[RMDB]
RNA sequence: GGGAACGACUCGAGUAGAGUCGAAAAGAUAUGGAAACACAAGCUUUUGACGAGCGAGUAUCGGAAACGAUACCGCUCGAUAAGCUUGGUUUCCUAAGUCAAAUCGACACUCUUCGGAGUGUCGAAACACAUAAGUGCUGUUCGCAGCACUUAUGUGAAAAGAAACAACAACAACAAC
Reactivity to 2A3 in 0.01 (KOAc 150mM, MgCl2 10mM, bicine 150mM(pH8.5), 24C), signal-to-noise 7, nucleotides 027 to 126: g000a000u030a000u060g040g030a040a030a000c240a040c010a300a010g020c020u160u240u300u300g300a300c070g000a000g010c010g020a080g030u000a000u010c000g000g020a030a010a000c010g000a000u010a000c000c000g000c000u010c000g000a000u020a000a000g000c000u000u000g000g000u010u000u000c000c000u000a030a010g000u010c020a040a030a300u040c010g000a000c000a000c010u010c000u050u110c300g150g010a000g010u000g000u010c000g000a000a010a010
Reactivity to DMS in 0.01 (KOAc 150mM, MgCl2 10mM, bicine 150mM(pH8.5), 24C), signal-to-noise 5, nucleotides 027 to 126: g000a020u000a120u010g010g000a000a010a000c010a140c020a000a010g010c000u000u000u000u010g020a240c110g000a000g010c000g000a150g010u000a000u000c010g000g000a020a020a060c010g010a020u000a000c000c010g010c000u000c000g010a020u010a000a020g000c000u000u000g000g010u000u000u000c000c000u000a000a070g000u000c010a110a130a210u000c000g010a020c000a010c000u010c000u000u020c280g030g010a020g010u000g000u000c000g000a010a070a190